The data come from the RNA Mapping Database (RMDB), library OK2TST. This 177-nucleotide RNA was probed chemically with 2A3 and DMS. 2A3 adducts were read by reverse transcription with SuperScript II with manganese. The reactions ran in a buffer of 150 mM KOAc, 10 mM MgCl2 and 150 mM bicine (pH 8.5), at 24 C. For 2A3, 7,212 sequencing reads were counted.
RNA sequence: GGGAACGACUCGAGUAGAGUCGAAAAGCUCUUCCAGUGCAAACACGCGCUUGCCCGCAUAAUGACGGCAGAGGAGUUCAACAAGCGGCGUAUGGCGCGCAAUGUCGAGCCGUCUGGCAUCGGCAGAAUAUACUCCAGGAUUCGUCCUGGAGUAUAUAAAAGAAACAACAACAACAAC
Reactivity to 2A3 in 0.01 (KOAc 150mM, MgCl2 10mM, bicine 150mM(pH8.5), 24C), signal-to-noise 3, nucleotides 027 to 126: g020c020u030c020u100u040c050c030a030g010u070g160c050a050a100a050c030a010c080g000c000g000c010u010u020g010c000c010c000g000c020a050u110a230a070u130g040a020c020g050g040c080a030g040a070g150g060a100g050u110u070c030a050a050c050a160a030g000c010g040g000c050g030u040a100u180g050g000c020g010c010g010c030a010a090u030g010u000c000g000a000g000c020c010g170u190c290u260g010g000c030a190u020c000g000g010c000a000g020a010
Reactivity to DMS in 0.01 (KOAc 150mM, MgCl2 10mM, bicine 150mM(pH8.5), 24C), signal-to-noise 8, nucleotides 027 to 126: g010c060u000c050u000u000c020c050a120g010u010g010c100a100a110a110c190a110c030g010c020g010c010u000u010g000c030c010c010g010c030a060u000a110a110u000g000a050c060g000g010c090a100g000a110g020g000a100g000u010u000c060a050a080c220a110a100g010c010g000g000c170g020u000a040u000g010g010c020g000c010g020c100a060a060u000g010u000c010g010a040g000c000c010g000u000c200u020g010g010c020a080u000c010g010g000c020a040g010a100